[RMDB]
RNA sequence: GGGAACGACUCGAGUAGAGUCGAAAAGCGACUACCUUCGGGUAGUCGCAAAUAAAUUCAGCGGUAAUUCGAGGCGAAAUAUUUCCGCUGAUCGCCUCGAAAAAAGCCUAGACUUCGGUCUAGGCAAUCUUCGUAUCUUGUUCGCAAGAUACGAAGAAAAAGAAACAACAACAACAAC
Reactivity to DMS in 0.01 (KOAc 150mM, MgCl2 10mM, bicine 150mM(pH8.5), 24C), signal-to-noise 1, nucleotides 027 to 126: g000c000g000a030c000u010a010c000c010u000u010c130g020g000g010u000a010g010u000c010g040c010a000a010a030u000a080a100a080u000u000c100a150g020c130g000g010u020a070a110u000u000c010g020a010g000g010c000g000a010a050a060u000a170u000u000u010c030c000g020c100u000g000a100u010c010g000c000c010u010c000g010a000a010a010a070a080a100g000c030c010u000a000g000a000c010u000u010c130g010g000u000c000u000a000g000g020c000a000a020
Reactivity to 2A3 in 0.01 (KOAc 150mM, MgCl2 10mM, bicine 150mM(pH8.5), 24C), signal-to-noise 1, nucleotides 027 to 126: g000c000g000a000c050u000a000c010c000u000u020c160g040g000g020u000a010g000u010c040g010c000a000a000a000u010a000a000a000u150u010c020a040g060c020g090g070u140a120a170u070u010c020g010a010g000g000c010g020a000a090a030u230a060u040u050u050c020c000g040c080u020g020a000u000c000g000c010c000u000c020g060a040a000a000a000a000a000g000c000c000u000a010g020a010c020u050u060c290g100g000u020c000u040a020g010g000c000a010a010
The record gives the reactivity of an RNA of 177 nucleotides to DMS and 2A3. The data come from the RNA Mapping Database (RMDB), library M2PK50. 2A3 adducts were read by reverse transcription with SuperScript II with manganese. In probing experiments dimethyl sulfate is read out at A N1 and C N3, which are open when not base-paired.